[RMDB]
RNA sequence: GGGAACGACUCGAGUAGAGUCGAAAAUUGGGAUCGGGCUUGACGCCAUGGCGCAGGAGCUGGCGGCCGUGUACGCGCACAUAUACGGCCUGUGCCUGGACGUCAGCUUGCUCGAAUAUGUUGACCCGAGAGGCGUGGACCGGGAGCGCUACCGUAACGUUCUCUUUAGUUUCGACUAAAGAGAACGAAAAGAAACAACAACAACAAC
Reactivity to 2A3 in 0.01 (KOAc 150mM, MgCl2 10mM, bicine 150mM(pH8.5), 24C), signal-to-noise 2, nucleotides 027 to 156: u080u080g040g000g010a020u020c020g000g000g000c030u060u060g010a010c020g000c020c020a080u150g000g000c000g010c010a000g000g080a100g080c060u090g130g010c050g050g000c000c000g020u040g050u010a030c060g080c030g010c200a010c040a100u180a010u030a030c040g030g000c000c000u000g000u010g000c010c000u000g000g040a110c000g010u000c000a000g010c000u010u080g000c000u000c000g000a040a030u180a070u200g120u040u060g050a070c000c010c020g020a060g000a000g040g040c070g000u050g030g000a120c060c000g020g010g030a000g010c050g000c030u060a080c000c010g080u070a080a080
Reactivity to DMS in 0.01 (KOAc 150mM, MgCl2 10mM, bicine 150mM(pH8.5), 24C), signal-to-noise 1, nucleotides 027 to 156: u010u020g020g000g020a060u010c060g030g030g000c010u000u040g020a060c010g000c000c000a200u000g000g010c000g040c030a100g000g020a100g060c030u000g010g010c040g000g000c000c020g000u010g040u000a020c060g010c040g010c180a100c080a110u000a080u000a040c000g000g010c020c020u000g030u000g010c000c000u010g050g020a030c010g000u000c000a030g010c060u010u000g000c020u000c020g000a090a130u010a080u020g030u000u000g000a230c000c010c000g020a160g050a110g010g010c050g040u020g050g030a150c110c020g000g020g010a300g010c030g030c050u000a150c050c030g030u000a120a220
About this RNA:
The record gives the reactivity of an RNA of 207 nucleotides to 2A3 and DMS. Reactivities are given for positions 27 through 156. For 2A3, 1,448 sequencing reads were counted.